Overview: An RNA of 177 nucleotides, treated with DMS and 2A3 and read out base by base. The 2A3 profile rests on 5,643 reads. Source: RMDB library OK1LIB, as collected in RNAgym. The reactions ran in a buffer of 150 mM KOAc, 10 mM MgCl2 and 150 mM bicine (pH 8.5), at 24 C. For DMS the reverse transcriptase was MarathonRT. 2A3 adducts were read by reverse transcription with SuperScript II with manganese.

RNA sequence: GGGAACGACUCGAGUAGAGUCGAAAAGAAACGACGGUUGGCUAAUCCUGGUCGGACAUCAGGAGGUUAGUGCACUCGCAUAAGCCAUCUUGACAACAAAAAGGAAAAAGAAAGAAGAAAAAGAAAAGGAGUAUAAAUCAUUCGUGAUUUAUACUCCAAAAGAAACAACAACAACAAC
Reactivity to DMS in 0.01 (KOAc 150mM, MgCl2 10mM, bicine 150mM(pH8.5), 24C), signal-to-noise 4, nucleotides 027 to 126: g010a130a150a130c050g000a120c160g000g000u010u010g000g000c020u010a090a100u000c020c000u000g010g010u020c150g000g000a280c240a130u000c020a000g010g040a020g000g000u000u010a110g020u000g010c000a160c210u030c240g030c100a020u010a070a080g000c010c010a070u000c010u000u000g000a080c050a060a220c100a030a010a040a060a060g010g000a020a030a050a040a060g000a080a040a060g000a080a070g000a050a050a080a080a080g000a090a070a090a160
Reactivity to 2A3 in 0.01 (KOAc 150mM, MgCl2 10mM, bicine 150mM(pH8.5), 24C), signal-to-noise 3, nucleotides 027 to 126: g020a010a050a000c060g120a000c040g060g000u070u080g040g010c040u060a050a050u000c000c000u010g030g010u050c080g050g090a030c030a060u020c000a000g000g000a010g040g040u120u070a060g030u030g010c020a060c180u130c150g010c000a020u030a100a030g000c000c000a090u000c000u010u050g040a020c030a070a010c020a030a220a040a000a040g110g000a050a080a050a030a010g110a080a090a020g090a020a020g060a030a120a030a000a000g090a020a060a010a030
The DMS profile rests on 4,733 reads.